[RMDB]
RNA sequence: GGGAACGACUCGAGUAGAGUCGAAAAGAUCUGGGCCAUCAUCGAAGCAAGUUAGUCGUGCUCUUGUCGUGGCUAGUAGAAAGGAAGUUGAUAGCUACAAUUUGGCUAUCAAGAAGAUGGACGAGGCCACGCACGUAAGCUUCGGCUUACGUGCGUGAAAAGAAACAACAACAACAAC
Reactivity to DMS in 0.01 (KOAc 150mM, MgCl2 10mM, bicine 150mM(pH8.5), 24C), signal-to-noise 1, nucleotides 027 to 126: g040a070u000c000u000g000g000g200c000c020a030u050c080a090u000c020g000a040a130g060c120a050a060g020u000u000a030g050u000c010g000u000g010c050u060c230u030u000g000u030c040g000u010g000g000c000u000a090g010u050a010g000a110a120a110g000g000a090a070g030u080u000g120a000u000a000g000c030u000a070c300a190a200u000u000u020g000g000c010u010a030u000c010a000a020g000a030a120g020a000u010g030g000a060c000g010a020g000g050c030
Reactivity to 2A3 in 0.01 (KOAc 150mM, MgCl2 10mM, bicine 150mM(pH8.5), 24C), signal-to-noise 1, nucleotides 027 to 126: g040a030u030c030u040g000g010g020c000c000a000u070c000a140u040c000g020a030a000g130c010a010a010g050u050u010a010g020u020c120g060u170g020c000u050c020u170u100g150u070c000g010u000g000g000c050u020a000g030u140a090g090a050a160a010g150g000a120a050g040u000u000g000a000u000a000g000c000u000a050c050a300a130u050u030u130g000g000c000u000a000u000c000a000a000g100a020a020g040a010u050g000g100a040c000g030a200g000g000c020